[RMDB]
RNA sequence: GGGAACGACUCGAGUAGAGUCGAAAACUCCGGACCGUAGCUUGGAUACCAAGACACUUCUUUUCCCUCACUGCAUGCAGCUUGAGCAAGGGUAAGACCUGUGCUUAAGACUCCUUGGCCUCCGAAAGGAUCCACUACGUUUCGACGUAGUGGAUCCAAAAGAAACAACAACAACAAC
Reactivity to 2A3 in 0.01 (KOAc 150mM, MgCl2 10mM, bicine 150mM(pH8.5), 24C), signal-to-noise 3, nucleotides 027 to 126: c020u000c000c000g020g030a010c010c030g120u090a020g060c080u070u090g070g040a120u170a160c010c030a040a010g040a050c050a010c060u090u050c010u030u100u060u040c010c000c020u030c040a090c020u000g000c010a020u060g020c040a020g020c030u000u050g020a010g000c020a020a050g040g050g020u040a130a030g070a110c010c000u180g040u080g110c010u020u010a000a010g020a060c010u020c000c030u070u040g040g010c000c030u020c020c010g090a040a120a030
Reactivity to DMS in 0.01 (KOAc 150mM, MgCl2 10mM, bicine 150mM(pH8.5), 24C), signal-to-noise 1, nucleotides 027 to 126: c100u030c000c060g010g000a070c060c000g000u000a030g000c000u000u000g000g000a100u000a140c050c090a000a130g000a120c050a040c010u000u000c030u000u000u000u000c000c050c200u000c020a110c050u000g030c050a030u060g040c020a000g020c040u020u000g000a010g000c010a190a050g060g010g080u040a100a220g000a300c000c000u000g000u000g030c000u060u070a020a010g000a210c150u000c010c050u060u020g000g020c010c000u010c010c080g000a160a050a170